[RMDB]
RNA sequence: GGGAACGACUCGAGUAGAGUCGAAAACAAUAUAGGUUCUCCAUCUUACCCAAAAUGGUUGAAGAAAUCAACUCUUUCCUCGGAGAUUCCAGAUGUUGAAAAAUGCAAAUGGGAUGAUAGCCUAGGAAAAGUCGACUUGAUUGAAGAACUGCAACCAGUCAUUGUGCAAGUUCGCUUGCACAAUGACAAAAGAAACAACAACAACAAC
Reactivity to 2A3 in 0.01 (KOAc 150mM, MgCl2 10mM, bicine 150mM(pH8.5), 24C), signal-to-noise 1, nucleotides 027 to 156: c030a050a000u180a040u070a300g160g000u040u010c030u040c060c000a020u000c050u150u130a170c010c010c040a070a120a090a120u050g000g020u070u070g040a110a060g030a020a070a020u020c000a010a020c010u020c020u090u020u000c000c000u000c030g000g000a040g000a020u000u000c000c000a000g000a020u010g010u070u080g180a200a070a010a010a050u260g000c010a000a010a040u020g020g000g000a020u000g110a150u100a000g050c020c020u000a000g000g000a020a040a000a020g070u100c060g020a050c070u060u070g030a050u020u130g060a070a060g000a100a040c020u020g070c020a000a090c000c020a040